[RMDB]
RNA sequence: GGGAACGACUCGAGUAGAGUCGAAAAGAUAUGGAUCCCAUAAGGCUUUUGACGAAGUCUAAUCGGAAACGAUUAGUCUUCGAUAAGCCUGUGGGAUCCUAAGUCAAAAGAUCCCUUCGGGGAUCAAGAAGAAGUGAAGGUUCGCCUUCACUUCUUCAAAAGAAACAACAACAACAAC
Reactivity to 2A3 in 0.01 (KOAc 150mM, MgCl2 10mM, bicine 150mM(pH8.5), 24C), signal-to-noise 1, nucleotides 027 to 126: g020a010u050a030u130g000g000a010u030c000c010c020a020u080a100a120g010g000c030u100u200u300u300g240a170c030g020a010a000g000u000c000u010a020a000u010c000g000g020a090a030a030c020g000a000u010u010a000g000u010c000u000u000c000g000a000u050a070a030g000c000c000u000g020u010g000g050g010a010u000c000c000u000a040a010g000u000c000a010a020a020a140g010a010u000c000c010c000u000u060c260g080g000g000g010a000u000c010a000a050
Reactivity to DMS in 0.01 (KOAc 150mM, MgCl2 10mM, bicine 150mM(pH8.5), 24C), signal-to-noise 2, nucleotides 027 to 126: g000a030u000a300u020g000g000a000u000c000c000c010a030u000a060a010g020g020c000u010u000u020u000g030a250c120g030a000a010g020u000c000u020a000a010u000c010g000g010a190a110a190c010g000a010u000u000a000g000u000c010u000u010c000g020a090u010a030a040g010c000c000u000g040u000g000g000g030a000u000c010c000u000a020a080g020u020c070a090a110a150a150g000a030u000c000c000c000u000u010c180g020g010g030g020a010u010c020a030a130

Background
Structure probing data (2A3 and DMS) for a 177-nucleotide construct. For DMS the reverse transcriptase was MarathonRT. Conditions: 150 mM KOAc, 10 mM MgCl2 and 150 mM bicine (pH 8.5), 24 C. High DMS reactivity at an A or C suggests that its Watson-Crick edge is free. The 2A3 profile rests on 3,272 reads.